Source information:
Chemical mapping of a 177-nucleotide RNA with DMS and 2A3. The DMS profile rests on 2,063 reads. DMS adducts were read by reverse transcription with MarathonRT. 2A3 adducts were read by reverse transcription with SuperScript II with manganese. The reactions ran in a buffer of 150 mM KOAc, 10 mM MgCl2 and 150 mM bicine (pH 8.5), at 24 C. The 2A3 profile rests on 1,494 reads.

RNA sequence: GGGAACGACUCGAGUAGAGUCGAAAAAGACAUGAGAAAGACAGGAAGUCCACUGUCCAAUUUCCUCCGUGGGUCAUGACGGAAGGGCCAGAGGGGAAGGACCUCAGUUCACUGAUGGAUGUGGAUGUCUGACACGAUACUUCGGUAUCGUGUCAGAAAAAGAAACAACAACAACAAC
Reactivity to DMS in 0.01 (KOAc 150mM, MgCl2 10mM, bicine 150mM(pH8.5), 24C), signal-to-noise 2, nucleotides 027 to 126: a000g000a040c080a020u010g000a170g020a070a040a030g020a020c080a140g000g030a120a100g000u020c040c010a010c000u020g000u000c020c060a070a090u030u010u010c000c000u020c010c080g010u000g010g000g020u000c060a020u040g000a180c130g000g000a030a070g070g000g000c020c000a130g010a260g010g000g000g000a000a030g030g020a150c060c030u010c000a100g010u000u010c190a160c080u000g000a040u020g010g000a070u000g010u000g020g000a070u030g060
Reactivity to 2A3 in 0.01 (KOAc 150mM, MgCl2 10mM, bicine 150mM(pH8.5), 24C), signal-to-noise 3, nucleotides 027 to 126: a000g080a030c070a020u170g000a090g020a020a090a020g090a050c000a010g180g010a020a070g000u000c000c000a000c020u060g000u000c000c060a130a140u000u010u060c000c000u050c060c010g190u170g070g100g000u010c010a020u170g060a050c030g060g020a070a190g030g020g000c020c000a110g060a110g030g000g000g000a050a050g000g010a030c000c030u010c000a060g010u270u270c160a150c140u080g010a140u180g100g000a050u070g000u000g010g000a050u060g020